The record gives the reactivity of an RNA of 177 nucleotides to DMS and 2A3. Values cover nucleotides 27 to 126. Conditions: 150 mM KOAc, 10 mM MgCl2 and 150 mM bicine (pH 8.5), 24 C.
RNA sequence: GGGAACGACUCGAGUAGAGUCGAAAAAUAUUACGUACGCGCGCGAUCGCGGCUAGCAUGCUAAUAUCGCGGCUAUAAUUAGCUAGCUAUAUAUACGCGGCCGGCGCAUUAGCCGCGUAGCUAAUGCGCAGGCGACCCUAUUCGUAGGGUCGCCUGCAAAAGAAACAACAACAACAAC
Reactivity to DMS in 0.01 (KOAc 150mM, MgCl2 10mM, bicine 150mM(pH8.5), 24C), signal-to-noise 2, nucleotides 027 to 126: a100u000a030u000u000a050c140g000u010a060c080g020c010g000c080g020c030g010a040u000c030g020c020g010g000c080u000a040g020c010a170u000g030c060u000a070a060u000a040u000c070g010c030g010g000c020u010a040u010a100a120u010u000a030g010c010u000a130g020c010u000a030u020a070u010a070u010a080c060g020c050g000g010c020c010g030g010c020g000c030a030u010u000a050g020c000c000g000c060g000u000a050g010c060u000a020a030u000g010c130
Reactivity to 2A3 in 0.01 (KOAc 150mM, MgCl2 10mM, bicine 150mM(pH8.5), 24C), signal-to-noise 1, nucleotides 027 to 126: a000u140a060u070u120a030c060g010u040a030c050g010c000g020c030g030c010g080a040u050c020g000c010g050g000c000u040a060g010c040a030u130g000c010u040a040a000u050a020u060c010g020c000g020g000c000u010a030u040a140a250u180u020a020g000c000u000a060g000c060u020a000u010a020u000a020u020a180c040g000c040g030g000c000c010g070g020c010g000c010a020u010u000a010g000c000c000g000c000g050u010a020g000c000u060a090a010u060g030c030

For DMS the reverse transcriptase was MarathonRT.